[RMDB]
RNA sequence: GGGAACGACUCGAGUAGAGUCGAAAAAUGUUCUUGGAACAGACUCAGCAUUCCCUUAACUUUGUGGGAGAGUUCGUUGUCAACGAUGUUGUCCUCGCAAUUCUCUCUGGAACCACAACUAAUGUUGCUUAUGCUAAGAGUUCGCUCUUAGCAUAAGAAAAGAAACAACAACAACAAC
Reactivity to DMS in 0.01 (KOAc 150mM, MgCl2 10mM, bicine 150mM(pH8.5), 24C), signal-to-noise 6, nucleotides 027 to 126: a080u000g000u000u010c020u020u010g030g010a040a030c040a060g000a140c120u000c080a080g020c130a170u000u000c000c000c010u010u010a070a090c140u000u010u000g040u010g000g000g000a030g000a030g010u000u000c020g010u000u000g000u000c020a020a020c040g010a150u020g010u000u000g000u000c020c040u000c020g010c190a020a030u000u000c010u000c000u000c060u000g010g000a070a250c060c050a050c030a010a060c190u000a110a090u010g010u010u000g000
Reactivity to 2A3 in 0.01 (KOAc 150mM, MgCl2 10mM, bicine 150mM(pH8.5), 24C), signal-to-noise 5, nucleotides 027 to 126: a010u050g000u010u020c050u070u130g090g010a010a010c010a030g040a050c040u040c130a030g020c020a090u020u000c000c010c000u010u020a080a080c060u030u070u120g100u100g010g050g000a010g000a010g010u020u010c010g000u020u020g040u060c010a010a010c050g190a190u250g000u040u020g010u000c000c010u010c020g020c040a020a040u060u010c010u000c000u020c060u070g120g040a050a030c010c020a010c030a040a030c040u120a180a100u140g050u080u050g040